[RMDB]
The record gives the reactivity of an RNA of 207 nucleotides to 2A3 and DMS. High 2A3 reactivity points to a flexible backbone, as in loops and unpaired stretches. It was measured as part of the RMDB library RNAMAK. The 2A3 profile rests on 8,924 reads.
RNA sequence: GGGAACGACUCGAGUAGAGUCGAAAAUGAUUCGAUUCGUCGAAUCACACCAUCCUAAGUCUAGUCCCUUGGAUUUAGACAUGCUAAUCGGAAACGAUUAGCAACAGCUUGUCAGGGAUACUAGAUAUGGAACACCUUACAAAGUUCGCUUUGUAAACGCUCAAAUAAUGUUCGCAUUAUUUGAGCGAAAAGAAACAACAACAACAAC
Reactivity to 2A3 in 0.01 (KOAc 150mM, MgCl2 10mM, bicine 150mM(pH8.5), 24C), signal-to-noise 7, nucleotides 027 to 156: u090g000a000u000u000c000g000a000u020u050c240g020u010c000g130a010a000u010c010a020c010a010c010c020a080u060c000c010u070a170a050g010u000c000u000a010g030u030c010c020c010u050u180g220g000a070u270u170u210a040g050a090c020a030u010g000c000u000a000a000u000c010g040g020a080a040a050c030g000a000u000u000a000g060c000a000a010c010a000g060c000u010u020g010u030c010a010g000g020g000a010u050a130c000u000a000g000a010u020a040u070g010g010a040a060c040a110c070c040u030u020a020c010a000a010a010g010u020u090c220g070c130u010u020u020g000u040a060a050a040
Reactivity to DMS in 0.01 (KOAc 150mM, MgCl2 10mM, bicine 150mM(pH8.5), 24C), signal-to-noise 2, nucleotides 027 to 156: u000g000a040u000u010c000g000a060u000u020c300g040u000c020g050a010a000u000c020a020c040a130c080c030a270u010c000c000u000a040a280g000u010c020u000a020g000u000c140c000c070u000u010g040g020a010u000u000u010a040g010a030c050a300u000g020c000u010a000a010u000c000g000g030a200a140a280c040g020a020u000u000a000g020c000a000a040c090a140g050c020u000u000g010u000c010a070g000g010g000a120u000a070c000u000a050g000a050u000a300u020g020g000a000a030c050a120c110c040u020u000a140c020a030a040a050g020u000u010c250g010c000u020u000u000g020u010a050a050a210